[RMDB]
RNA sequence: GGGAACGACUCGAGUAGAGUCGAAAAUGGUGUUAAGUGGAAUAAGUGGAGAGAUAUACAUAUAUGUACAGGGGGCUACAUAUAUGUAUAUGCCCCCUCGCGUCAGUAUAAGUAGGUAUAAGGUGGAGAUGGAUAGGACUUUCGAGUCCUAUCCAUCAAAAGAAACAACAACAACAAC
Reactivity to 2A3 in 0.01 (KOAc 150mM, MgCl2 10mM, bicine 150mM(pH8.5), 24C), signal-to-noise 2, nucleotides 027 to 126: u080g040g010u050g030u170u140a110a080g030u040g040g040a040a110u060a160a000g010u030g060g020a030g000a010g040a000u000a000u000a060c010a000u090a000u030a000u050g030u050a010c030a040g030g000g000g030g000c010u020a000c000a020u020a030u070a010u050g010u010a010u000a010u060g000c040c000c000c000c000u000c010g030c010g100u100c040a040g020u040a070u000a170a020g050u040a020g080g000u110a030u000a140a000g080g000u010g000g070a070
Reactivity to DMS in 0.01 (KOAc 150mM, MgCl2 10mM, bicine 150mM(pH8.5), 24C), signal-to-noise 1, nucleotides 027 to 126: u010g030g000u000g000u000u010a070a060g010u040g060g010a060a040u010a080a070g000u000g000g000a060g000a080g010a060u000a040u000a000c000a000u010a030u050a010u000g000u000a030c170a070g010g000g000g000g040c090u000a010c040a000u000a010u000a000u010g020u000a010u030a020u020g000c060c020c000c020c020u000c060g000c050g000u000c080a060g010u010a030u010a060a110g000u030a020g000g000u000a040u020a090a070g020g020u010g000g000a110
Structure probing data (2A3 and DMS) for a 177-nucleotide construct. The reactions ran in a buffer of 150 mM KOAc, 10 mM MgCl2 and 150 mM bicine (pH 8.5), at 24 C. For 2A3, 1,037 sequencing reads were counted. High DMS reactivity at an A or C suggests that its Watson-Crick edge is free. DMS adducts were read by reverse transcription with MarathonRT.